[RMDB]
RNA sequence: GGGAACGACUCGAGUAGAGUCGAAAAGAAAUUCCCGAUCGGCGGUAAAGUCCGCGAGCCGAACGAAAAAGGUAUGGCAGGAACCGGUGAGAUUCCGGUACCGACAGUAUAGUCUGGAUGGAAGAAGGUAGCCUCCUCUCGUUCGCGAGAGGAGGAAGUACUACUCGAAGUUCGCUUCGAGUAGUACAAAAGAAACAACAACAACAAC
Reactivity to 2A3 in 0.01 (KOAc 150mM, MgCl2 10mM, bicine 150mM(pH8.5), 24C), signal-to-noise 1, nucleotides 027 to 156: g020a010a060a010u070u030c040c000c000g020a280u060c010g010g000c000g000g000u010a000a000a070g000u030c020c000g040c000g010a000g010c020c030g060a080a090c030g070a130a120a000a020a020g080g000u090a070u130g020g020c000a000g000g010a000a000c000c000g030g000u010g000a010g010a000u000u000c000c000g000g010u000a000c000c000g020a010c000a020g010u010a040u110a200g040u040c060u080g090g060a080u120g090g060a050a080g040a030a020g130g000u050a060g070c000c000u000c000c000u000c000u010c000g030u100u050c240g000c010g100a000g000a000g000g030a010g000g000a000a000
Reactivity to DMS in 0.01 (KOAc 150mM, MgCl2 10mM, bicine 150mM(pH8.5), 24C), signal-to-noise 2, nucleotides 027 to 156: g010a100a090a160u000u000c010c000c010g010a090u010c010g000g000c010g000g000u000a050a300a120g020u000c060c000g010c020g020a300g040c010c010g000a050a300c030g010a070a090a140a170a200g010g050u000a120u020g030g020c010a130g000g000a070a010c030c000g000g000u000g000a260g000a300u010u010c010c010g000g010u000a010c000c000g030a020c080a110g010u000a150u010a100g010u000c020u010g020g010a120u000g010g010a080a100g010a120a010g020g020u010a100g000c000c000u010c020c000u000c000u010c000g030u000u000c300g040c000g010a030g000a040g000g000a000g000g010a010a020
Conditions: 150 mM KOAc, 10 mM MgCl2 and 150 mM bicine (pH 8.5), 24 C. This 207-nucleotide RNA was probed chemically with 2A3 and DMS. For DMS, 2,546 sequencing reads were counted. It was measured as part of the RMDB library M2RFPK.